The data come from the RNA Mapping Database (RMDB), libraries RFM100 and RFMREP. Chemical mapping of a 177-nucleotide RNA with 2A3 and DMS. The RNA was probed in 150 mM KOAc, 10 mM MgCl2 and 150 mM bicine (pH 8.5) at 24 C. DMS adducts were read by reverse transcription with MarathonRT.
[RMDB]
RNA sequence: GGGAACGACUCGAGUAGAGUCGAAAAUAGGGUAUACCCAAAAUAUACACGAAAGCAUCGUUGUAAAUACAUGAUUUUAGGUGUAUGAUUAGGGUGUAUAUUAAAUGGUUUUGAAAAGAGGUGCUUUCUAAUAGUUCAAGUUCGCUUGAACUAUUAGAAAAGAAACAACAACAACAAC
Reactivity to 2A3 in 0.01 (KOAc 150mM, MgCl2 10mM, bicine 150mM(pH8.5), 24C), signal-to-noise 3, nucleotides 027 to 126: u150a030g100g000g010u010a000u020a030c000c000c000a040a000a000a000u060a000u000a010c000a000c010g080a060a020a010g020c020a000u030c100g020u020u070g090u180a100a140a040u300a050c020a000u020g060a120u070u040u020u080a120g140g030u010g000u000a010u050g120a100u040u070a020g020g000g000u010g000u000a020u030a030u050u180a060a110a070u160g070g050u040u060u050u180g110a060a060a000a030g100a050g060g050u070g040c000u010u000u020
Reactivity to DMS in 0.01 (KOAc 150mM, MgCl2 10mM, bicine 150mM(pH8.5), 24C), signal-to-noise 3, nucleotides 027 to 126: u040a080g030g010g000u000a020u000a030c000c000c010a060a060a110a090u010a040u000a010c000a020c000g010a040a020a030g000c040a000u000c190g010u010u010g020u030a110a090a120u010a030c010a010u000g000a060u010u010u000u000a080g020g010u000g000u000a000u000g010a060u020u000a120g010g010g000u010g010u020a010u010a050u000u000a050a050a110u030g000g030u010u020u000u000g000a040a030a070a100g000a090g010g000u000g010c040u000u000u000